Overview:
The record gives the reactivity of an RNA of 207 nucleotides to 2A3 and DMS. The RNA was probed in 150 mM KOAc, 10 mM MgCl2 and 150 mM bicine (pH 8.5) at 24 C. Values are in units of 0.01, from 0 to 300, in steps of 10. The 2A3 profile rests on 4,487 reads. For 2A3 the reverse transcriptase was SuperScript II with manganese. For DMS, 5,392 sequencing reads were counted.
RNA sequence: GGGAACGACUCGAGUAGAGUCGAAAAGUAAAGGGGAAAGAAUAAAACACUUUUUUUGCAACUUCUUUUAAGGCCUUGCAUUGCAAAGAGUUGGGAGAGUUGCAGUGACAGUGCCAGUAAAAAGUUACAGUUCUUGACCGACACCGGUGCACGUCACCGUAUGAUAACGGUUCGCCGUUAUCAUACGAAAAGAAACAACAACAACAAC
Reactivity to 2A3 in 0.01 (KOAc 150mM, MgCl2 10mM, bicine 150mM(pH8.5), 24C), signal-to-noise 6, nucleotides 027 to 156: g090u080a040a060a080g030g010g020g020a070a040a020g050a080a090u220a140a150a100a010c050a050c050u080u030u030u020u010u080u080g010c010a030a020c030u200u170c020u030u140u070u110a140a060g060g010c010c000u000u010g000c040a250u040u280g000c020a050a070a040g090a040g040u080u070g030g020g010a020g000a000g010u000u000g000c010a000g000u010g020a020c020a050g010u010g030c020c020a010g050u110a000a070a020a000a000g020u040u050a060c050a060g010u010u030c010u040u060g060a050c000c020g060a020c020a020c080c040g050g020u090g000c010a010c050g020u030c020a000c030
Reactivity to DMS in 0.01 (KOAc 150mM, MgCl2 10mM, bicine 150mM(pH8.5), 24C), signal-to-noise 3, nucleotides 027 to 156: g010u000a050a070a090g000g000g020g010a130a040a060g000a100a110u000a040a110a100a080c050a050c030u010u000u000u000u020u010u000g010c010a020a010c010u000u000c020u000u000u010u010a050a140g020g040c010c020u000u010g020c020a200u000u010g000c000a020a020a040g020a060g020u000u010g010g010g000a090g010a120g020u000u000g010c000a050g020u000g020a030c030a130g020u020g020c020c020a060g000u010a050a040a060a080a020g010u010u000a060c090a120g010u000u000c050u000u000g010a130c040c020g020a200c130a050c020c020g030g020u000g010c010a050c040g000u000c030a030c030